[RMDB]
RNA sequence: GGGAACGACUCGAGUAGAGUCGAAAAUUUACGGGCCCGGGAGGAGGACCGAAUACACGCGCGCGAGGACCUCCAGGUAGUACGAACGCGCGCGUGAAUAAUAGUACUACCACCCGGGCCCACCGAAUGAUAUUCCAAAGUUCGCUUUGGAAUAUCAAAAAGAAACAACAACAACAAC
Reactivity to DMS in 0.01 (KOAc 150mM, MgCl2 10mM, bicine 150mM(pH8.5), 24C), signal-to-noise 2, nucleotides 027 to 126: u000u000u000a110c050g020g000g050c030c000c010g000g000g010a080g010g010a070g010g000a060c080c060g000a240a110u000a060c020a010c000g010c010g010c000g020c020g010a110g010g000a110c110c020u000c080c180a060g020g010u010a010g010u020a040c060g010a120a250c020g000c000g010c000g000c000g000u000g020a050a040u000a070a080u020a060g000u000a020c010u000a050c000c010a210c030c020c000g010g010g000c010c010c020a000c010c020g010a070a070
Conditions: 150 mM KOAc, 10 mM MgCl2 and 150 mM bicine (pH 8.5), 24 C. The record gives the reactivity of an RNA of 177 nucleotides to DMS. It was measured as part of the RMDB library M2PK90. The DMS profile rests on 1,284 reads. For DMS the reverse transcriptase was MarathonRT. Reactivities are given for positions 27 through 126.